[RMDB]
RNA sequence: GGGAACGACUCGAGUAGAGUCGAAAAACGUGACCUGCGCCAACUGCGAGAAAUCCAUCGACCGAACCCUGCAGGAGGAACGCGUCGACCGAGAACUACGCGGCCGGCUGUUCACCGCACGCGAACUGGUGACCAUCGUCGCCGACCGGCUCGGCCAUGAACAUUCAUCGUUCGCGAUGAAUGUUCAAAAAGAAACAACAACAACAAC
Reactivity to 2A3 in 0.01 (KOAc 150mM, MgCl2 10mM, bicine 150mM(pH8.5), 24C), signal-to-noise 2, nucleotides 027 to 156: a000c080g030u030g070a060c000c000u060g000c020g000c070c060a100a130c120u120g010c050g030a020g040a050a130a010u080c040c040a060u070c010g020a010c000c000g010a090a040c060c000c000u040g050c070a000g050g080a030g000g020a040a060c050g000c130g030u010c020g000a050c030c100g010a000g000a090a050c110u130a070c100g010c000g040g020c020c050g010g060c040u020g020u040u090c020a010c020c010g060c030a040c090g080c040g070a060a040c040u110g000g000u010g020a000c020c010a110u180c040g070u050c040g000c000c000g030a070c020c010g000g050c060u070c080g010g000c040c030a120